[RMDB]
An RNA of 177 nucleotides, treated with DMS and 2A3 and read out base by base. The DMS profile rests on 31,608 reads. For 2A3 the reverse transcriptase was SuperScript II with manganese. The RNA was probed in 150 mM KOAc, 10 mM MgCl2 and 150 mM bicine (pH 8.5) at 24 C. For DMS the reverse transcriptase was MarathonRT.

RNA sequence: GGGAACGACUCGAGUAGAGUCGAAAAGCUAGGGAGCCCACGAUGCCACUGGCCUGACGUCUAGUCAGCGUCUCCAUUAGUCUGAGUUAUUUAAAACGCUCACGGUGAAGUUCGUGACUACCACACAGUCUUAUCACGACUUCGGUUGUGGUAAGACAAAAGAAACAACAACAACAAC
Reactivity to DMS in 0.01 (KOAc 150mM, MgCl2 10mM, bicine 150mM(pH8.5), 24C), signal-to-noise 9, nucleotides 027 to 126: g000c030u000a040g000g010g010a090g000c050c030c050a060c070g010a050u010g000c040c020a090c060u010g000g000c040c050u020g010a030c030g010u020c090u020a080g000u000c050a130g000c060g010u000c010u000c060c040a060u010u020a080g000u010c070u010g000a040g000u000u010a080u030u040u050a060a060a100a120c260g010c020u000c010a030c070g000g000u000g000a060a070g010u010u010c050g010u000g000a110c050u010a080c070c040a070c140a080c160a120
Reactivity to 2A3 in 0.01 (KOAc 150mM, MgCl2 10mM, bicine 150mM(pH8.5), 24C), signal-to-noise 9, nucleotides 027 to 126: g030c030u050a030g010g020g020a020g020c010c030c010a020c010g030a030u060g020c000c010a050c030u020g030g000c000c010u010g000a010c010g030u060c090u100a030g010u010c010a010g010c010g020u000c010u010c010c010a060u050u100a050g030u010c040u020g010a000g020u010u010a080u070u150u080a070a080a010a010c050g000c000u010c010a010c060g020g000u050g040a070a020g040u050u040c010g010u030g030a020c010u040a050c000c020a040c000a010c010a030